About this RNA: Structure probing data (DMS) for a 177-nucleotide construct. It was measured as part of the RMDB library TTRINS. The RNA was probed in 150 mM KOAc, 10 mM MgCl2 and 150 mM bicine (pH 8.5) at 24 C.
RNA sequence: GGGAACGACUCGAGUAGAGUCGAAAAGAUAUGGACUUGACACGCAUGGCUAAUGGGACUAAGACAGACACUCGGAAACGAGUGUUCGAGUCCCAUUAGCCAUGACCCGUGCAAUGAGUCCUAAGUCCUAAAUAGAUUGCUUCGGCAAUCUAUUUAGAAAAGAAACAACAACAACAAC
Reactivity to DMS in 0.01 (KOAc 150mM, MgCl2 10mM, bicine 150mM(pH8.5), 24C), signal-to-noise 5, nucleotides 027 to 126: g000a130u010a260u000g010g000a030c010u010u000g000a160c020a000c010g010c000a010u010g000g000c010u010a010a010u010g010g020g010a010c010u010a210a150g020a200c300a170g000a020c010a000c000u000c000g000g000a140a100a160c010g020a010g010u000g010u000u000c040g000a020g010u000c000c010c000a000u010u000a000g000c010c000a010u000g000a050c250c120c080g020u020g010c080a100a080u000g010a020g000u010c000c010u010a070a150g010u000c030